[RMDB]
Source information: This 177-nucleotide RNA was probed chemically with DMS and 2A3. Conditions: 150 mM KOAc, 10 mM MgCl2 and 150 mM bicine (pH 8.5), 24 C. 2A3 adducts were read by reverse transcription with SuperScript II with manganese.
RNA sequence: GGGAACGACUCGAGUAGAGUCGAAAAGCCUUCUUUGGCAUGGUCUUGAGUACGCAAAGAAAGCGGGCACAUGGCGUCACCUGGUUCCCGGAGGGAUUCCGUGCACCGGCGGCGGUUAUGUCGCGACCUCUGCGUAACGAUUCGUCGUUACGCAGAGAAAAGAAACAACAACAACAAC
Reactivity to DMS in 0.01 (KOAc 150mM, MgCl2 10mM, bicine 150mM(pH8.5), 24C), signal-to-noise 2, nucleotides 027 to 126: g000c020c010u010u000c030u010u000u000g010g030c060a110u010g040g000u000c030u020u000g030a140g010u000a060c050g030c030a040a030a050g010a040a030a060g010c020g010g000g020c050a060c040a030u000g010g000c010g000u000c000a060c020c020u020g020g010u000u000c010c120c030g010g000a030g020g010g010a190u000u000c020c010g010u000g000c140a070c030c020g000g010c050g000g000c030g000g000u000u000a020u000g000u000c070g020c040g000a130c170
Reactivity to 2A3 in 0.01 (KOAc 150mM, MgCl2 10mM, bicine 150mM(pH8.5), 24C), signal-to-noise 2, nucleotides 027 to 126: g000c010c000u040u020c080u020u070u010g040g090c060a050u070g060g040u050c010u160u150g040a040g030u170a040c050g000c030a020a080a000g070a030a060a000g060c020g040g050g000c060a000c000a030u050g030g000c020g000u000c000a030c030c000u070g020g000u020u000c040c020c000g000g010a030g050g150g060a060u190u000c020c000g000u020g020c000a020c030c000g010g000c020g000g040c020g000g060u180u080a070u080g010u020c050g000c010g080a080c010